[RMDB]
RNA sequence: GGGAACGACUCGAGUAGAGUCGAAAAAAAGAAUGCCGAAUACGAAGUGAUAGAUGACUCACAAGAGCACUGGUGGAAGGUCAAAGAUGCCUUGGGGAAUGUCGGCUAUAUACCCAGCAACUAUGUCAAUAAAGUGAAUAUUCGUAUUCACUUUAUUAAAAGAAACAACAACAACAAC
Reactivity to DMS in 0.01 (KOAc 150mM, MgCl2 10mM, bicine 150mM(pH8.5), 24C), signal-to-noise 9, nucleotides 027 to 126: a050a060a090g010a120a080u010g010c010c010g010a050a040u000a130c090g010a090a060g010u010g010a080u000a100g010a140u000g010a090c040u000c020a060c060a050a060g010a140g020c060a060c050u000g000g020u000g000g010a080a050g010g000u000c050a050a070a080g010a130u010g010c030c030u000u000g000g010g010g010a090a070u000g010u000c020g000g010c010u000a070u010a070u000a120c010c010c000a120g000c140a050a060c100u000a090u010g000u010c120
Reactivity to 2A3 in 0.01 (KOAc 150mM, MgCl2 10mM, bicine 150mM(pH8.5), 24C), signal-to-noise 4, nucleotides 027 to 126: a000a000a010g120a050a020u100g000c000c000g020a020a020u080a080c060g060a120a040g070u050g100a030u060a130g170a090u080g070a060c010u000c030a090c010a090a020g020a020g030c040a010c090u050g010g060u060g070g130a100a050g080g010u090c040a030a050a120g080a070u090g020c000c010u030u030g030g000g010g050a080a020u110g030u040c000g010g000c010u010a010u010a000u030a090c010c000c010a010g040c000a010a030c030u150a060u270g090u100c030
This 177-nucleotide RNA was probed chemically with DMS and 2A3. The reactions ran in a buffer of 150 mM KOAc, 10 mM MgCl2 and 150 mM bicine (pH 8.5), at 24 C. The 2A3 profile rests on 13,951 reads. 2A3 adducts were read by reverse transcription with SuperScript II with manganese.